[RMDB]
RNA sequence: GGGAACGACUCGAGUAGAGUCGAAAAACGAUCGCAGUGGGGACAACGAUCACAGGGAGGUGCCUUGAUCCGCUUGGCCAGCGAUCGUUCGCGGACAAGAGGAGCAGCUGGAGCAGCUGGAGCAGCAACGUGAUUUUAAUUUCGAUUAAAAUCACGUAAAAGAAACAACAACAACAAC
Reactivity to 2A3 in 0.01 (KOAc 150mM, MgCl2 10mM, bicine 150mM(pH8.5), 24C), signal-to-noise 7, nucleotides 027 to 126: a020c010g010a000u000c010g000c050a100g200u140g120g120g020g040a030c020a040a010c070g010a020u030c010a010c090a060g040g030g020a220g090g150u210g090c000c000u010u020g020a030u020c030c040g050c120u020u020g020g020c000c020a020g000c010g010a000u020c010g000u010u020c010g000c030g010g020a030c020a060a050g020a020g060g020a020g020c010a010g000c020u050g030g030a040g040c010a000g000c030u030g000g020a020g030c020a000g010c020a030
Reactivity to DMS in 0.01 (KOAc 150mM, MgCl2 10mM, bicine 150mM(pH8.5), 24C), signal-to-noise 9, nucleotides 027 to 126: a050c040g010a020u000c010g020c020a180g030u010g030g010g010g010a080c030a040a040c060g000a030u000c020a050c300a050g000g010g020a170g020g010u010g010c020c020u010u000g000a040u000c030c080g020c120u000u010g010g000c000c010a140g010c010g010a020u000c060g010u000u000c050g020c060g000g000a050c060a040a060g010a070g010g010a060g010c050a040g010c050u000g010g000a090g010c060a060g010c040u000g000g000a080g010c050a060g010c110a130
The data come from the RNA Mapping Database (RMDB), library OK2TST. Structure probing data (2A3 and DMS) for a 177-nucleotide construct. DMS adducts were read by reverse transcription with MarathonRT. Conditions: 150 mM KOAc, 10 mM MgCl2 and 150 mM bicine (pH 8.5), 24 C. For 2A3, 18,191 sequencing reads were counted.